[RMDB]
RNA sequence: GGGAACGACUCGAGUAGAGUCGAAAAGAGUGGCGAGAAACGAUAAAGACGAAAAGCGGAGCAGAUGCCUUGCCAGCUCCACAUCGCCCUCUCUGCAUCUGCGUCGCCACCUCCGUGUGCACCACAAAUCAUAAUGAGUAUUCGUACUCAUUAUGAUAAAAGAAACAACAACAACAAC
Reactivity to DMS in 0.01 (KOAc 150mM, MgCl2 10mM, bicine 150mM(pH8.5), 24C), signal-to-noise 9, nucleotides 027 to 126: g010a070g020u000g010g010c010g020a030g000a120a090a130c120g000a080u020a070a130a110g010a090c090g010a060a050a100a130g010c040g000g000a080g010c010a040g010a050u010g000c020c090u020u010g010c050c030a100g000c050u010c020c050a050c100a060u010c060g000c020c010c020u000c030u000c040u010g010c080a040u010c010u000g010c040g010u000c020g000c000c010a030c040c020u000c020c020g010u020g010u010g010c080a090c040c050a080c130a070a080
Reactivity to 2A3 in 0.01 (KOAc 150mM, MgCl2 10mM, bicine 150mM(pH8.5), 24C), signal-to-noise 9, nucleotides 027 to 126: g070a010g000u050g010g020c020g000a030g090a090a120a020c050g020a060u150a170a190a040g130a060c100g060a080a070a040a030g050c040g010g020a010g000c010a010g020a050u080g010c010c040u030u040g020c020c010a060g020c030u040c030c010a040c020a070u100c040g020c000c010c000u020c000u000c010u030g000c000a060u010c010u030g010c010g050u030c010g000c000c010a020c010c010u020c010c010g050u070g020u050g040c050a050c040c010a040c050a040a160
Annotation
Source: RMDB library OK1LIB, as collected in RNAgym. Chemical mapping of a 177-nucleotide RNA with DMS and 2A3. For DMS the reverse transcriptase was MarathonRT. The 2A3 profile rests on 86,134 reads.